[RMDB]
RNA sequence: GGGAACGACUCGAGUAGAGUCGAAAAGAUAUGGACCCAUGUAACAGCAACAGCUAGGCUCGGAAACGAGCCUAGACAUGCUGGGACAUAAGGGUCCUAAGUCAAAGUGUGGCCUUCGGGCCACACAGUACUAACUGUAGUUCGCUACAGUUAGUACAAAAGAAACAACAACAACAAC
Reactivity to DMS in 0.01 (KOAc 150mM, MgCl2 10mM, bicine 150mM(pH8.5), 24C), signal-to-noise 8, nucleotides 027 to 126: g010a060u000a300u010g010g010a020c000c000c000a080u000g010u000a010a020c010a000g010c000a050a100c300a200g000c010u000a010g000g010c000u000c000g010g000a110a110a270c000g010a000g000c000c000u000a000g010a010c120a170u000g010c000u000g000g010g000a010c000a020u010a110a120g020g000g000u000c000c000u000a010a070g010u010c060a100a130a140g010u000g020u000g010g010c000c000u000u020c210g040g010g020c000c000a010c000a000c000a060
Reactivity to 2A3 in 0.01 (KOAc 150mM, MgCl2 10mM, bicine 150mM(pH8.5), 24C), signal-to-noise 6, nucleotides 027 to 126: g030a030u100a090u190g000g000a000c000c010c010a010u030g000u000a020a010c010a000g010c030a020a100c020a300g070c000u000a000g000g000c000u000c000g030g040a080a080a060c020g010a000g010c000c000u000a000g010a010c000a010u030g000c000u000g010g000g000a010c000a020u120a240a300g010g000g000u000c000c000u010a090a020g050u020c060a050a100a160g010u000g000u000g010g010c010c020u070u080c300g110g000g000c000c000a000c000a000c000a000